RNA sequence: GGGAACGACUCGAGUAGAGUCGAAAAGAUAUGGAGAGGUCCAGGGAGGUGAGUUUCGGAAACGAAACUUCACCUUUGAUCUGGACUACCCACCUCCUAAGUCAAAACACAUCCUUCGGGAUGUGAACACUUAUUGGUGCUUCGGCACCAAUAAGUGAAAAGAAACAACAACAACAAC
Reactivity to DMS in 0.01 (KOAc 150mM, MgCl2 10mM, bicine 150mM(pH8.5), 24C), signal-to-noise 2, nucleotides 027 to 126: g010a020u000a020u010g000g000a030g020a290g010g000u000c000c000a000g000g010g000a000g030g050u010g020a020g020u000u000u000c000g010g000a010a010a050c010g010a020a030a000c000u010u030c000a000c000c000u000u000u010g000a010u000c000u000g000g000a000c010u000a070c190c080c070a150c230c020u000c010c000u000a020a140g000u020c030a150a040a100a250c020a000c010a010u000c000c000u000u040c150g030g000g000a000u000g000u000g000a110a130
The record gives the reactivity of an RNA of 177 nucleotides to DMS. Conditions: 150 mM KOAc, 10 mM MgCl2 and 150 mM bicine (pH 8.5), 24 C. For DMS the reverse transcriptase was MarathonRT. Reactivities are given for positions 27 through 126.